[RMDB]
RNA sequence: GGGAACGACUCGAGUAGAGUCGAAAACGGAGAUAAUACUAAGUGGGGACCUAUACAUUGCUGUUCUUUUUUUAGUGGAAUGAUGCAACAAUUGCUUAAAGACCAUCCUGAUUGGUCUUCUUUCUACAAGUUGGUCUUCCUUAAAAAUCUUUACAGGGUAGCCAAUUAACUUCGGUUAAUUGGCUACAAAAGAAACAACAACAACAAC
Reactivity to 2A3 in 0.01 (KOAc 150mM, MgCl2 10mM, bicine 150mM(pH8.5), 24C), signal-to-noise 2, nucleotides 027 to 156: c010g110g000a120g030a070u110a210a040u110a150c080u020a060a000g030u150g010g000g000g000a000c000c030u030a030u030a190c050a060u060u070g040c120u090g020u150u070c030u060u130u150u030u000u060u170a090g000u050g000g040a020a000u110g120a050u130g070c010a030a010c020a090a300u130u070g030c000u040u190a050a020a020g000a000c000c000a000u050c010c000u220g060a300u040u000g010g000u020c010u000u000c000u040u070u010c010u000a050c050a180a130g000u020u010g030g000u000c000u020u010c010c010u010u010a000a000a020a030a100u070c010u030u100u140a010c030a000g280g000